[RMDB]
RNA sequence: GGGAACGACUCGAGUAGAGUCGAAAAAGAAGCUAAAACUGAGUAAGAUCUUGCUCUGUGCCAAGCACAUGCUAUUUUGCAUUAAAAGAGACCCCUGCCUUCUACAUAGUAUCCUCAUUUUACGGGUAGAAAUCUUGAGGUUUAGAGACGUAAAGUACAGUAAUUAGCUAUUCGUAGCUAAUUACUGAAAAGAAACAACAACAACAAC
Reactivity to DMS in 0.01 (KOAc 150mM, MgCl2 10mM, bicine 150mM(pH8.5), 24C), signal-to-noise 5, nucleotides 027 to 156: a090g010a090a130g030c030u000a040a050a090a120c050u000g010a100g020u000a070a090g000a080u000c080u000u000g010c020u000c020u000g030u000g000c050c090a090a120g030c040a080c100a070u010g010c030u000a100u000u000u000u000g020c030a110u000u010a050a050a090a130g000a150g000a110c030c000c010c020u000g020c030c030u000u000c030u000a070c060a080u000a110g010u000a070u010c050c040u000c060a100u010u000u000u000a070c030g020g040g000u010a070g010a050a040a040u000c040u000u020g010a080g020g020u000u010u000a080g000a130g010a070c030g010u000a040a040a060g020u000a150
Reactivity to 2A3 in 0.01 (KOAc 150mM, MgCl2 10mM, bicine 150mM(pH8.5), 24C), signal-to-noise 8, nucleotides 027 to 156: a000g060a030a000g010c030u070a020a020a060a100c050u050g020a020g040u070a080a040g040a170u070c060u070u080g000c020u010c020u040g030u030g060c050c050a060a020g020c010a050c000a060u050g000c020u080a150u210u210u130u110g010c020a020u060u140a070a100a070a020g070a020g020a040c010c010c000c010u010g030c020c010u040u050c010u040a050c020a080u110a040g050u060a060u080c000c030u050c030a040u010u080u090u100a040c050g030g040g000u020a020g060a030a090a030u030c030u040u070g020a070g060g000u020u070u090a030g010a000g010a030c030g040u080a050a030a090g080u110a060